[RMDB]
RNA sequence: GGGAACGACUCGAGUAGAGUCGAAAAGGGAGAUCCGAGCAGAGGCAUAGCGAACUGCGCACGGCGAAGCCUUGAGGGAACGCCGUAGGACCCGGGUUCGAUUCCCGGCCGCUCCACCGAAGGGCCAAUCGCGAUAUGAGUUCGCUCAUAUCGCGAUAAAAGAAACAACAACAACAAC
Reactivity to 2A3 in 0.01 (KOAc 150mM, MgCl2 10mM, bicine 150mM(pH8.5), 24C), signal-to-noise 2, nucleotides 027 to 126: g050g040g020a100g020a050u050c070c060g020a040g000c040a000g040a110g080g000c050a080u080a030g050c010g030a090a070c030u070g000c060g000c020a000c000g020g000c010g030a130a040g030c000c000u070u230g060a170g000g000g090a080a000c000g000c020c000g000u010a060g020g010a030c000c000c000g000g000g000u050u030c030g040a080u090u000c000c000c000g030g020c000c010g020c020u050c020c010a070c000c000g030a040a060g020g030g000c000c000a050
Reactivity to DMS in 0.01 (KOAc 150mM, MgCl2 10mM, bicine 150mM(pH8.5), 24C), signal-to-noise 2, nucleotides 027 to 126: g020g010g000a060g000a020u020c020c000g050a150g000c020a060g010a140g000g010c030a060u000a120g030c040g030a070a080c040u000g000c080g030c070a070c100g000g000c040g010a170a150g000c030c000u000u050g030a150g020g020g020a020a230c000g010c040c020g000u000a090g000g000a070c080c030c010g000g000g000u000u000c070g000a300u000u040c000c000c000g000g000c090c000g010c010u010c010c030a010c060c070g020a150a120g000g020g000c040c120a070
Conditions: 150 mM KOAc, 10 mM MgCl2 and 150 mM bicine (pH 8.5), 24 C. An RNA of 177 nucleotides, treated with 2A3 and DMS and read out base by base. DMS adducts were read by reverse transcription with MarathonRT. For 2A3, 1,401 sequencing reads were counted. 2A3 is a SHAPE reagent: it acylates the 2'-hydroxyl of flexible nucleotides of all four kinds. For 2A3 the reverse transcriptase was SuperScript II with manganese.